This 207-nucleotide RNA was probed chemically with DMS and 2A3. The data come from the RNA Mapping Database (RMDB), library OK3TST. The reactions ran in a buffer of 150 mM KOAc, 10 mM MgCl2 and 150 mM bicine (pH 8.5), at 24 C. For DMS the reverse transcriptase was MarathonRT.
RNA sequence: GGGAACGACUCGAGUAGAGUCGAAAAUGGGUCUGAAAACAUUGUCAAUUGUGGCUUCCUGCUUAGAGUCAAUCAAAAAGGAAACAGGAGAGCAUCUUGAUAUUUACGAGAUCGCCCGACGUGCUGAUGACCCAGCAAUCUAUGAGCGCAUCUCAAACAUGCAAUCCGAAUUCGUUCGGAUUGCAUGAAAAGAAACAACAACAACAAC
Reactivity to DMS in 0.01 (KOAc 150mM, MgCl2 10mM, bicine 150mM(pH8.5), 24C), signal-to-noise 2, nucleotides 027 to 156: u000g000g020g040u000c010u000g010a250a090a050a030c060a060u000u010g030u000c040a110a130u040u010g030u000g090g010c010u010u000c010c000u000g020c040u000u000a080g010a240g000u000c100a160a210u000c080a050a060a120a090a130g000g010a110a010a030c010a060g000g010a090g020a040g050c040a060u000c040u020u000g000a160u000a140u000u010u000a170c170g010a020g030a010u000c080g000c000c010c020g000a060c080g020u000g000c020u000g000a230u000g000a050c000c020c000a070g000c040a030a060u000c060u000a100u010g000a120g030c070g050c040a140u010c000u000c000a100a050a280
Reactivity to 2A3 in 0.01 (KOAc 150mM, MgCl2 10mM, bicine 150mM(pH8.5), 24C), signal-to-noise 6, nucleotides 027 to 156: u070g010g000g010u020c040u110g030a030a000a040a050c040a070u160u180g030u020c010a060a180u090u170g080u140g060g020c010u060u020c000c000u020g020c050u060u090a050g010a020g210u150c060a030a170u070c050a050a110a100a020a030g130g010a080a070a030c030a020g010g010a090g020a010g040c020a010u030c010u030u070g030a080u060a180u250u160u140a100c040g000a010g010a010u000c020g000c000c010c010g010a030c030g020u030g000c020u030g010a090u090g000a020c000c000c000a000g000c010a010a050u050c040u120a130u190g040a030g030c050g030c060a090u020c030u010c010a060a070a030